This 177-nucleotide RNA was probed chemically with 2A3 and DMS.
The 2A3 profile rests on 13,546 reads.
For DMS, 38,348 sequencing reads were counted.
The reactions ran in a buffer of 150 mM KOAc, 10 mM MgCl2 and 150 mM bicine (pH 8.5), at 24 C.

RNA sequence: GGGAACGACUCGAGUAGAGUCGAAAAGCACAAUGGGAGGAAGCCUGAUGCAGCGGCGCAGCGUGAGGGAUGAAGGCCUUCGGGUUGUAAACCUCCUUCAGCAGGGACGAUGCGUGAGUGCCGGUACAAUAAUAUAGUUAUUCGUAACUAUAUUAUUAAAAGAAACAACAACAACAAC
Reactivity to 2A3 in 0.01 (KOAc 150mM, MgCl2 10mM, bicine 150mM(pH8.5), 24C), signal-to-noise 7, nucleotides 027 to 126: g020c010a020c010a040a100u100g020g000g010a040g020g030a040a010g020c000c000u040g020a040u060g000c040a020g030c000g010g000c010g000c010a010g010c010g070u080g020a020g020g020g000a020u300g010a060a000g010g010c000c000u010u040c080g060g000g000u010u030g010u010a000a010a000c000c000u020c000c010u040u020c010a040g000c010a010g030g010g030a020c020g050a060u100g010c030g030u090g050a080g020u040g000c000c000g020g010u070a040c050
Reactivity to DMS in 0.01 (KOAc 150mM, MgCl2 10mM, bicine 150mM(pH8.5), 24C), signal-to-noise 9, nucleotides 027 to 126: g010c060a070c090a080a070u020g000g000g000a080g000g010a090a070g010c030c020u010g000a070u010g010c060a070g010c050g000g000c040g010c040a090g000c070g000u010g010a040g000g000g000a040u030g010a210a300g000g000c030c010u000u040c130g010g000g010u000u010g010u010a020a300a280c020c010u000c010c120u000u010c060a080g000c040a060g000g010g000a040c070g000a090u020g010c040g010u010g010a100g020u010g000c010c030g000g010u020a070c160